This 177-nucleotide RNA was probed chemically with DMS and 2A3. It was measured as part of the RMDB library OK1LIB.

RNA sequence: GGGAACGACUCGAGUAGAGUCGAAAACACGAACGUUGGCUAAUCCUGGUCGGACAUCAGGGGGUUAGUGCACUGGCAUAAGCCAACUUGGCGCUAAUAGAUACUAAUCGUAGCAUAGCUGAAUAAAAUAUAGGUCCUACUUCGGUAGGACCUAUAUAAAAGAAACAACAACAACAAC
Reactivity to DMS in 0.01 (KOAc 150mM, MgCl2 10mM, bicine 150mM(pH8.5), 24C), signal-to-noise 3, nucleotides 027 to 126: c040a100c270g020a120a050c160g000u000u000g000g010c030u010a060a120u030c040c000u000g000g040u010c170g030g020a220c120a030u000c040a030g010g010g020g000g000u010u020a010g020u000g030c000a100c040u000g010g030c040a160u040a170a170g000c000c040a040a080c100u020u020g000g000c030g000c060u010a000a090u080a070g000a150u010a030c070u010a070a040u000c080g030u040a100g000c070a140u000a040g000c070u010g000a080a030u020a030a080a060
Reactivity to 2A3 in 0.01 (KOAc 150mM, MgCl2 10mM, bicine 150mM(pH8.5), 24C), signal-to-noise 2, nucleotides 027 to 126: c130a020c030g070a080a000c170g000u060u000g020g010c000u000a040a090u100c000c030u030g090g000u000c040g040g090a120c010a070u050c020a020g000g010g000g080g000u000u050a040g010u000g010c010a050c200u050g130g000c000a140u000a290a000g010c000c020a000a020c050u010u080g050g020c020g010c010u030a030a020u020a260g050a010u050a060c110u160a260a040u020c010g000u000a000g010c050a020u040a060g000c000u010g100a050a060u130a150a140a040
Values cover nucleotides 27 to 126. 2A3 adducts were read by reverse transcription with SuperScript II with manganese. The RNA was probed in 150 mM KOAc, 10 mM MgCl2 and 150 mM bicine (pH 8.5) at 24 C.